The record gives the reactivity of an RNA of 177 nucleotides to DMS and 2A3. 2A3 is a SHAPE reagent: it acylates the 2'-hydroxyl of flexible nucleotides of all four kinds. The reactions ran in a buffer of 150 mM KOAc, 10 mM MgCl2 and 150 mM bicine (pH 8.5), at 24 C.
RNA sequence: GGGAACGACUCGAGUAGAGUCGAAAAGGAUUGGAGCGAAUAAGUUGGCAAAAAGGAGUAAAGUUACAUAAUCUAGAAACUUCGGUACCGUGUAUAUCUACAACAACUGAGGCUAAACUGGUUGCGGGUCUAAUUUAGUGUUCGCACUAAAUUAGACAAAAGAAACAACAACAACAAC
Reactivity to DMS in 0.01 (KOAc 150mM, MgCl2 10mM, bicine 150mM(pH8.5), 24C), signal-to-noise 7, nucleotides 027 to 126: g000g000a080u010u010g000g010a050g020c070g000a080a070u010a040a090g010u000u010g010g010c060a030a080a050a070a060g020g010a080g010u010a050a060a050g000u010u020a080c120a070u020a100a070u020c060u010a070g020a060a080a100c030u000u010c050g000g010u010a050c110c100g030u010g010u000a040u020a070u010c080u000a040c060a040a050c070a050a060c050u000g010a070g010g000c050u000a020a070a080c080u010g000g000u000u010g000c110g000g010
Reactivity to 2A3 in 0.01 (KOAc 150mM, MgCl2 10mM, bicine 150mM(pH8.5), 24C), signal-to-noise 8, nucleotides 027 to 126: g060g010a020u070u130g030g010a030g000c030g010a040a030u110a130a040g060u050u060g030g000c040a040a020a030a070a030g050g040a010g020u080a050a090a030g020u050u050a040c030a050u220a110a060u090c050u050a040g070a050a090a020c010u040u030c020g030g010u050a070c060c050g020u030g040u020a020u010a020u110c050u040a070c020a080a010c010a020a020c030u050g030a010g030g010c010u040a070a030a030c040u050g040g000u030u040g010c040g060g050